About this RNA: This 207-nucleotide RNA was probed chemically with 2A3. Values cover nucleotides 27 to 156. The RNA was probed in 150 mM KOAc, 10 mM MgCl2 and 150 mM bicine (pH 8.5) at 24 C.
RNA sequence: GGGAACGACUCGAGUAGAGUCGAAAAUUCCAUUUGAGUAUCCUGAAAACGGGCUUUUCAGCAUGGAACGUACAUAUUAAAUAGUAGGAGUGCAUAGUGACCCGUAUAGCAGGCAUUAACAUUCCUGAAAACGUGAAAAGGUUCGCCUUUUCACGAACUUUGUUAGGGUCUUCGGACCCUAACAAAGAAAAGAAACAACAACAACAAC
Reactivity to 2A3 in 0.01 (KOAc 150mM, MgCl2 10mM, bicine 150mM(pH8.5), 24C), signal-to-noise 1, nucleotides 027 to 156: u010u000c010c000a050u080u020u150g010a010g020u090a070u190c010c010u010g080a040a050a050a070c110g000g000g040c020u130u130u000u060c030a030g000c000a040u030g030g000a100a060c090g060u050a000c090a040u130a060u130u240a140a260a090u180a070g120u010a000g000g030a060g030u030g000c010a070u010a130g080u120g040a300c000c010c000g000u070a070u070a100g170c090a010g030g000c010a000u030u030a000a000c000a010u000u030c000c000u000g030a080a090a100a050c000g000u000g000a000a000a000a000g000g000u090u060c070g120c120c000u010u000u000u000c000a010c000g010a000a000